[RMDB]
RNA sequence: GGGAACGACUCGAGUAGAGUCGAAAAGGGGACGGUAACCAGGGUGGUAAACUCGUACUCAGCUGCUUCAGACUCAGUACCAGUCAACUUGGACAGUAAUGUAGAUUUCCCCACCGACGGGAACCCGAGUACCUCGAUACUUCGGUAUCGAGGUACUAAAAGAAACAACAACAACAAC
Reactivity to 2A3 in 0.01 (KOAc 150mM, MgCl2 10mM, bicine 150mM(pH8.5), 24C), signal-to-noise 3, nucleotides 027 to 126: g010g000g000g030a020c040g040g020u070a030a010c000c020a000g010g010g010u060g040g030u120a070a070a040c040u010c020g040u010a010c000u030c020a000g000c010u020g000c010u080u130c080a140g020a190c010u000c030a000g040u040a020c020c000a010g050u060c020a020a020c040u050u080g020g000a020c050a060g010u140a070a140u160g080u070a040g040a210u030u010u060c020c010c000c030a060c010c000g060a060c050g000g020g000a020a020c000c000c000g000
Reactivity to DMS in 0.01 (KOAc 150mM, MgCl2 10mM, bicine 150mM(pH8.5), 24C), signal-to-noise 2, nucleotides 027 to 126: g010g000g000g000a190c150g000g010u040a030a180c020c010a070g000g050g020u000g030g030u010a030a120a020c030u010c300g050u000a010c040u000c220a060g000c010u000g000c150u030u000c050a080g010a140c000u000c050a070g040u000a110c000c030a130g060u000c070a020a040c140u000u000g000g010a050c030a050g000u040a110a140u000g040u000a120g030a090u000u000u000c080c050c020c030a120c050c000g000a110c060g030g020g000a010a080c160c000c000g000

Conditions: 150 mM KOAc, 10 mM MgCl2 and 150 mM bicine (pH 8.5), 24 C.
The record gives the reactivity of an RNA of 177 nucleotides to 2A3 and DMS.
2A3 adducts were read by reverse transcription with SuperScript II with manganese.
The 2A3 profile rests on 2,083 reads.